[RMDB]
RNA sequence: GGGAACGACUCGAGUAGAGUCGAAAACGACAACGUCCGCCCCGCGGGCGGCGGAUGGAACAGCGGGGGGAAGCCCGUCAGCGCGGCGCCCCUCAACCUCGACGCACUCCAGAUGCAAGAGAACCUCCGCAGCGUAUGGGCCGACGCCAACGCCUACUGAAGUCAGAAAAUUCGUUUUCUGACUUCAAAAAGAAACAACAACAACAAC
Reactivity to 2A3 in 0.01 (KOAc 150mM, MgCl2 10mM, bicine 150mM(pH8.5), 24C), signal-to-noise 1, nucleotides 027 to 156: c020g010a050c050a040a040c000g000u000c000c020g010c000c000c060c040g020c120g070g180g010c080g070g000c020g000g020a030u060g010g020a160a030c070a140g100c250g000g000g000g000g000g000a020a190g070c070c070c000g000u040c060a010g130c010g020c060g060g000c000g050c040c000c000c010u010c010a080a080c020c000u020c020g020a020c140g000c020a020c050u220c090c000a040g100a200u060g030c020a010a010g000a010g020a050a020c000c010u000c020c000g010c020a020g020c020g060u100a200u090g000g000g000c000c060g020a000c000g000c020c000a050a040c040g090c020c000u130a140c030
An RNA of 207 nucleotides, treated with 2A3 and read out base by base. Conditions: 150 mM KOAc, 10 mM MgCl2 and 150 mM bicine (pH 8.5), 24 C. For 2A3 the reverse transcriptase was SuperScript II with manganese. For 2A3, 452 sequencing reads were counted.